Structure probing data (DMS and 2A3) for a 207-nucleotide construct.

RNA sequence: GGGAACGACUCGAGUAGAGUCGAAAAGCGAAAAUCGGACGGUGGCUGCAAGUCGCAUCGCAAAACCGCGGCAAGUGGAGUAAGCGAGAGGAGGCUGGGUUUUGGCUUCCUUAAGCAAUCGGUCACCAUAAGAGGAUUCGCUUCGGCGAAUCCUCAACAUCGACAAUAUGUUCGCAUAUUGUCGAUGAAAAGAAACAACAACAACAAC
Reactivity to DMS in 0.01 (KOAc 150mM, MgCl2 10mM, bicine 150mM(pH8.5), 24C), signal-to-noise 2, nucleotides 027 to 156: g020c020g040a070a040a110a100u000c060g000g030a040c050g020g030u010g010g040c040u000g010c030a070a160g050u010c040g020c020a150u000c040g020c080a050a050a080a160c070c040g000c000g030g000c020a090a200g010u000g000g000a160g010u000a090a230g010c040g000a300g000a030g020g000a040g030g030c000u010g040g020g020u020u000u000u000g030g010c000u000u000c020c000u000u020a000a300g010c040a110a110u010c020g030g010u000c020a020c020c020a110u010a080a050g020a040g000g010a030u000u000c000g020c020u000u000c240g030g020c000g010a030a010u000c000c000u000c000a000a080
Reactivity to 2A3 in 0.01 (KOAc 150mM, MgCl2 10mM, bicine 150mM(pH8.5), 24C), signal-to-noise 5, nucleotides 027 to 156: g060c020g050a040a020a010a170u190c070g080g030a030c080g020g000u000g000g000c010u020g000c090a110a030g030u020c030g020c020a050u060c040g010c070a060a090a050a060c040c030g010c020g060g040c150a150a070g020u040g040g050a070g040u090a120a040g020c000g000a030g000a000g010g000a000g010g000c030u060g050g160g150u100u110u170u300g030g000c010u010u000c010c000u000u010a030a020g000c000a010a020u060c010g010g000u010c000a000c010c000a000u040a060a040g000a000g000g000a000u000u000c010g000c000u010u020c060g050g000c000g000a000a010u000c000c000u000c000a010a010

The data come from the RNA Mapping Database (RMDB), library M2RFPK. Conditions: 150 mM KOAc, 10 mM MgCl2 and 150 mM bicine (pH 8.5), 24 C. Values cover nucleotides 27 to 156.